[RMDB]
RNA sequence: GGGAACGACUCGAGUAGAGUCGAAAAUGCUGCCGUUCCUGGCACCAUCAGCUCUGUAGCAACGAUAACAAUCACCAAACCAACAAGCACCGGUACCGAGGUGCGUUUUACGACUUCAAACGGCGAGUCCUUAAGAGAGGUUCGCCUCUCUUAAGGAAAAAGAAACAACAACAACAAC
Reactivity to DMS in 0.01 (KOAc 150mM, MgCl2 10mM, bicine 150mM(pH8.5), 24C), signal-to-noise 8, nucleotides 027 to 126: u010g010c080u010g020c030c020g010u010u000c020c030u000g020g010c050a050c060c040a050u000c100a080g010c030u000c050u000g010u000a100g010c030a060a080c110g000a060u010a090a080c140a070a070u000c040a060c060c040a050a080a120c100c100a070a060c120a080a130g010c020a030c030c030g010g010u010a090c130c130g000a100g000g010u000g000c020g010u000u000u000u000a090c060g000a060c030u000u000c070a050a090a100c080g000g020c070g000a100g000
Reactivity to 2A3 in 0.01 (KOAc 150mM, MgCl2 10mM, bicine 150mM(pH8.5), 24C), signal-to-noise 4, nucleotides 027 to 126: u070g000c020u050g020c000c020g010u050u050c010c000u010g030g010c010a020c010c000a050u100c030a010g010c020u020c020u130g090u100a010g040c030a030a050c060g030a010u060a120a070c060a060a070u050c000a020c050c040a080a040a040c020c020a010a050c010a100a030g020c020a020c010c010g040g070u160a100c040c050g060a030g000g020u010g010c010g020u000u000u020u050a030c010g000a020c000u050u050c110a090a090a060c010g080g000c020g020a010g050